[RMDB]
RNA sequence: GGGAACGACUCGAGUAGAGUCGAAAAAACUCAGCUAGGGAGAGUAUAACAUUCAUGUUGACGAGACCUAGACGAAACACAGAGGAAAAUUCUUAAUCACUGGAUAGUAUUAGUAAUGACUCUGUGUAAAACUCUUCUACGUUCGCGUAGAAGAGAACACAAUGUGAUUCUUCGGAAUCACAUUGUGAAAAGAAACAACAACAACAAC
Reactivity to 2A3 in 0.01 (KOAc 150mM, MgCl2 10mM, bicine 150mM(pH8.5), 24C), signal-to-noise 4, nucleotides 027 to 156: a000a000c030u020c010a020g020c000u000a000g020g030g000a070g010a030g040u120a150u100a300a020c070a020u090u210c080a080u300g040u050u020g020a000c030g000a010g030a060c000c000u010a010g010a060c010g020a000a040a000c000a000c010a000g000a010g010g060a130a080a010a030u030u030c020u050u130a050a050u050c040a010c040u060g070g120a170u260a300g010u010a020u040u010a020g020u050a010a060u040g020a010c000u000c000u000g000u000g000u000a000a000a010a010c000u000c000u000u000c000u010a000c000g030u020u050c200g030c010g140u000a000g000a000a010g000a000g010a020a000
Reactivity to DMS in 0.01 (KOAc 150mM, MgCl2 10mM, bicine 150mM(pH8.5), 24C), signal-to-noise 2, nucleotides 027 to 156: a090a030c020u000c010a130g050c020u010a050g010g010g000a160g010a260g010u000a070u020a040a040c020a130u010u000c100a150u010g010u020u000g000a000c040g010a300g020a030c000c000u000a070g000a300c080g010a090a090a050c020a000c000a030g000a020g000g010a130a080a040a110u000u000c020u010u000a030a020u020c090a140c080u000g000g020a180u010a080g030u020a230u000u000a040g020u000a040a060u010g000a180c010u000c000u000g000u010g020u000a030a050a030a100c030u000c000u000u000c000u000a010c020g030u000u000c260g010c060g030u000a000g000a010a000g010a010g010a010a060
Background
The data come from the RNA Mapping Database (RMDB), library M2RFPK. Chemical mapping of a 207-nucleotide RNA with 2A3 and DMS. For DMS the reverse transcriptase was MarathonRT. Reactivities are given for positions 27 through 156. As a SHAPE reagent, 2A3 marks flexible, mostly unpaired nucleotides at the ribose 2'-OH. The reactions ran in a buffer of 150 mM KOAc, 10 mM MgCl2 and 150 mM bicine (pH 8.5), at 24 C.